Structure probing data (DMS) for a 177-nucleotide construct.
[RMDB]
RNA sequence: GGGAACGACUCGAGUAGAGUCGAAAAUAAAAGACUCUACUGAGGUAGGAAAUAAAGAGAGAGAGAGCUACCCUCGUCUGUCAGUCACUCUCUGUCUGACUCUCUCUCUCGAGACGUUCCCAAAAAAACUUAAGGAUUAGUUCGCUAAUCCUUAAGUAAAAGAAACAACAACAACAAC
Reactivity to DMS in 0.01 (KOAc 150mM, MgCl2 10mM, bicine 150mM(pH8.5), 24C), signal-to-noise 2, nucleotides 027 to 126: u000a130a130a150a150g000a010c010u000c000u000a000c000u000g000a050g000g000u000a020g000g020a070a090a060u010a060a090a080g000a040g020a030g010a020g010a010g010a060g010c030u000a030c030c010c030u010c100g000u000c110u030g000u000c040a050g000u000c090a070c170u030c140u000c100u010g000u000c010u000g010a040c010u010c010u010c010u010c020u000c000u000c000g000a030g010a080c000g000u000u010c000c010c010a000a010a080a100a030a020
Source information: The reactions ran in a buffer of 150 mM KOAc, 10 mM MgCl2 and 150 mM bicine (pH 8.5), at 24 C. DMS adducts were read by reverse transcription with MarathonRT.